This 177-nucleotide RNA was probed chemically with DMS. For DMS, 1,274 sequencing reads were counted. For DMS the reverse transcriptase was MarathonRT. The reactions ran in a buffer of 150 mM KOAc, 10 mM MgCl2 and 150 mM bicine (pH 8.5), at 24 C.
RNA sequence: GGGAACGACUCGAGUAGAGUCGAAAAGCAUCCGAUUCGAGCGAACCAUCUACCCCGACGACAACUCCGUGCUGCUUGCGGGGUUUAGACAUCUCAUUCUCCCUUCGCCUCGAGCAACGCUAUGAACUGCCAUACUAUGCUUCGGCAUAGUAUGGCAAAAAGAAACAACAACAACAAC
Reactivity to DMS in 0.01 (KOAc 150mM, MgCl2 10mM, bicine 150mM(pH8.5), 24C), signal-to-noise 2, nucleotides 027 to 126: g010c100a180u000c030c030g000a190u000u010c020g000a020g000c050g020a040a130c160c020a090u000c050u000a150c010c000c000c010g000a100c040g000a060c080a010a030c030u010c110c090g000u000g020c080u030g000c140u010u010g010c030g020g010g020g010u000u000u000a020g040a120c220a070u030c040u000c050a060u000u010c040u000c010c000c030u000u000c030g010c100c040u000c030g000a060g080c080a090a140c140g000c070u000a050u000g010a120a090c210